[RMDB]
RNA sequence: GGGAACGACUCGAGUAGAGUCGAAAAUGACUGGUCGUCGCUGCGGGAAGACCUUAAGCUCUUUGGCAUCCGUAAUAGCACAUUAUCAGCACUUAUGCCAUGUGAGUCAUCUUCCCAAGUUUCCAACAGUACAAACGGUAUCGAGCCUCCACGCGGAACCACAUAGAUUCUUCGGAAUCUAUGUGGUAAAAGAAACAACAACAACAAC
Reactivity to 2A3 in 0.01 (KOAc 150mM, MgCl2 10mM, bicine 150mM(pH8.5), 24C), signal-to-noise 5, nucleotides 027 to 156: u090g040a020c030u040g030g020u080c030g020u010c030g030c030u040g030c100g020g000g000a010a010g010a030c010c000u030u060a100a030g000c000u000c000u030u010u000g010g000c010a010u030c020c020g050u070a090a140u050a190g070c040a060c040a200u130u280a150u300c110a040g040c020a020c060u080u030a000u010g000c000c000a030u040g070u050g070a000g030u090c020a020u000c010u020u000c020c000c000a010a000g020u030u040u020c020c020a040a030c010a060g030u100a070c040a080a110a010c060g030g020u050a070u180c050g010a010g010c000c010u000c030c010a050c040g050c030g040g020a020
Reactivity to DMS in 0.01 (KOAc 150mM, MgCl2 10mM, bicine 150mM(pH8.5), 24C), signal-to-noise 2, nucleotides 027 to 156: u010g000a160c060u000g020g020u000c030g040u000c060g000c020u000g030c010g000g020g010a020a030g010a060c070c090u000u010a110a200g010c010u000c000u000u010u010g020g000c000a080u010c080c090g030u000a050a160u010a110g030c070a150c130a200u000u000a140u000c070a120g000c090a140c080u000u010a050u000g000c000c000a040u000g010u020g040a010g030u000c040a070u000c030u000u000c000c020c020a080a230g010u000u010u000c040c010a090a070c040a070g010u010a090c040a060a070a120c040g010g020u000a090u010c030g010a120g010c000c010u010c010c030a070c070g000c060g010g020a120